[RMDB]
Structure probing data (DMS) for a 177-nucleotide construct.
It was measured as part of the RMDB library TTRINS.
Reactivities are given for positions 27 through 126.
RNA sequence: GGGAACGACUCGAGUAGAGUCGAAAAGAUAUGGAAUUUGGGAAUAGCUCCCCACCACAUGAACUACUGCGAAGGGUCGGAAACGACCCUAAGCAGCAUGUGAGGCUAUUCCCAAAUUCCUAAGUCAUCUAAAUUGAUACUUCGGUAUCAAUUUAGAAAAAGAAACAACAACAACAAC
Reactivity to DMS in 0.01 (KOAc 150mM, MgCl2 10mM, bicine 150mM(pH8.5), 24C), signal-to-noise 3, nucleotides 027 to 126: g000a060u020a300u000g010g000a010a010u000u000u000g000g020g010a050a010u000a010g000c030u010c050c030c020c040a300c060c020a020c010a020u010g000a080a050c090u030a300c010u000g000c000g020a300a060g000g030g010u000c000g010g000a100a050a300c000g020a020c000c000c000u010a000a300g010c000a000g000c000a010u000g000u000g000a120g000g000c010u000a010u000u000c000c000c000a000a000a000u010u000c000c000u010a000a080g020u010c030a160